[RMDB]
This 207-nucleotide RNA was probed chemically with 2A3 and DMS. Conditions: 150 mM KOAc, 10 mM MgCl2 and 150 mM bicine (pH 8.5), 24 C. Reactivities are rounded to 0.1 and cut off at 0 and 3. For DMS the reverse transcriptase was MarathonRT.
RNA sequence: GGGAACGACUCGAGUAGAGUCGAAAACGUGAAUCCUUCGGGAUUCACGAAAAAAUCCUAAGUCACCGUUGAUCUUGUCAGACCCGGUCGGAAACGACCGCGGUCUUGGAUUUAGGGAGGUGAUAUGGAAAAAAAACCUCACGUUCGCGUGAGGUAACUACGAUACAAACUUCGGUUUGUAUCGUAGAAAAGAAACAACAACAACAAC
Reactivity to 2A3 in 0.01 (KOAc 150mM, MgCl2 10mM, bicine 150mM(pH8.5), 24C), signal-to-noise 2, nucleotides 027 to 156: c000g000u000g000a000a010u000c010c000u060u080c200g070g010g000a000u000u010c000a000c000g000a000a000a000a010a000a000u030c010c000u020a080a020g020u000c000a000c000c010g090u120u010g010a000u000c000u000u020g010u010c000a000g000a000c000c010c000g010g010u000c000g000g060a050a050a090c010g010a000c000c010g000c060g010g010u000c000u000u060g000g000a030u280u080u110a010g000g010g000a010g000g000u000g000a010u010a080u070g010g070a100a010a000a000a000a040a020a050c000c020u040c000a000c000g020u070u080c280g000c000g070u010g000a000g000g000u000a000a000
Reactivity to DMS in 0.01 (KOAc 150mM, MgCl2 10mM, bicine 150mM(pH8.5), 24C), signal-to-noise 1, nucleotides 027 to 156: c030g010u010g000a050a010u000c000c010u000u000c300g030g000g000a020u000u010c010a000c020g020a030a030a080a180a100a070u000c000c010u010a050a260g020u000c010a020c000c000g040u010u010g030a050u000c000u040u010g020u000c000a030g000a000c010c020c000g020g000u010c000g000g000a180a150a230c020g010a000c020c000g000c110g020g000u000c040u000u030g070g000a040u000u010u000a000g010g000g010a070g060g020u000g020a020u000a180u000g000g000a000a000a000a080a130a090a110a040c010c000u000c000a010c000g050u010u030c300g100c020g020u010g000a040g000g050u010a000a060